[RMDB]
RNA sequence: GGGAACGACUCGAGUAGAGUCGAAAAGAUAUGGAACCCUCCGACGUCGAUAAGCAGCACUCGGAAACGAGUGGCUGCUUUUGACGACGGGGAGGGUUCCUAAGUCAAACGACCCUUCGGGGUCGAAGAUUACGUCUUACUUCGGUAAGACGUAAUCAAAAGAAACAACAACAACAAC
Reactivity to 2A3 in 0.01 (KOAc 150mM, MgCl2 10mM, bicine 150mM(pH8.5), 24C), signal-to-noise 1, nucleotides 027 to 126: g000a040u070a060u130g000g000a000a030c020c040c040u000c060c020g300a300c010g040u010c010g010a100u020a110a010g010c000a000g000c000a000c000u000c010g100g000a120a040a040c020g010a010g060u030g050g020c000u000g010c000u000u020u000u000g010a010c020g000a000c000g010g010g000g010a010g030g000g000u000u000c000c000u010a010a000g000u000c020a010a010a070c030g000a010c000c010c000u010u050c250g060g010g010g000u000c000g030a030a000
Reactivity to DMS in 0.01 (KOAc 150mM, MgCl2 10mM, bicine 150mM(pH8.5), 24C), signal-to-noise 4, nucleotides 027 to 126: g000a060u010a300u010g000g000a000a000c000c000c000u000c000c000g000a140c020g010u010c010g040a130u000a020a010g010c000a000g000c000a050c000u000c000g010g000a130a090a200c000g020a030g020u000g000g030c000u000g010c010u010u000u000u000g010a230c090g000a010c030g000g000g010g030a020g000g010g010u000u000c000c000u000a000a060g000u010c020a130a140a300c020g000a020c000c000c000u000u010c180g030g000g000g000u000c000g020a030a050
Structure probing data (2A3 and DMS) for a 177-nucleotide construct. The 2A3 profile rests on 4,719 reads. Values cover nucleotides 27 to 126. Conditions: 150 mM KOAc, 10 mM MgCl2 and 150 mM bicine (pH 8.5), 24 C. Source: RMDB library TTRDES, as collected in RNAgym. 2A3 adducts were read by reverse transcription with SuperScript II with manganese. Values are in units of 0.01, from 0 to 300, in steps of 10.